[RMDB]
RNA sequence: GGGAACGACUCGAGUAGAGUCGAAAAACCUGAAUGAUCAAUCGAUCAACCAGCGUCUGGCUCAGCAGGGCAGCGUAGAUGGUUCGCUUGCGACGAUAGACUUAUCGUCUGCAUCCGAUUCCAUCUCCGAUCGCCUGGUGUGGAGUUUUCUCCCACCCUGUCUUAUGAACUUCGGUUCAUAAGACAGAAAAGAAACAACAACAACAAC
Reactivity to 2A3 in 0.01 (KOAc 150mM, MgCl2 10mM, bicine 150mM(pH8.5), 24C), signal-to-noise 7, nucleotides 027 to 156: a000c020c010u050g050a090a180u070g000a010u010c070a160a150u250c270g010a000u010c020a010a050c070c020a020g030c020g130u070c070u100g050g000c010u020c060a070g010c010a040g030g010g000c010a040g040c030g010u020a000g000a020u000g000g000u010u000c000g000c010u010u000g000c000g000a000c000g000a000u020a020g250a140c160u250u060a020u010c000g020u030c160u190g000c000a000u000c010c000g010a030u260u100c000c000a000u000c000u000c010c000g040a100u110c070g030c020c000u030g040g020u050g060u140g040g010a020g000u080u070u130u060c040u000c000c000c000a020c010c000
Reactivity to DMS in 0.01 (KOAc 150mM, MgCl2 10mM, bicine 150mM(pH8.5), 24C), signal-to-noise 1, nucleotides 027 to 156: a070c000c000u000g020a130a090u000g010a050u000c030a170a140u000c170g000a040u020c020a070a120c070c020a030g000c110g000u010c020u010g020g000c000u000c050a120g030c030a130g040g000g040c030a110g010c020g050u000a010g000a020u000g020g000u000u000c000g010c010u010u000g020c010g000a010c000g020a040u000a040g020a300c190u000u010a010u000c000g010u000c000u020g050c010a010u010c030c000g000a050u020u000c000c000a000u000c010u010c030c010g010a080u000c180g010c000c000u000g030g030u010g000u000g030g000a080g000u000u000u000u000c020u000c010c000c000a040c200c070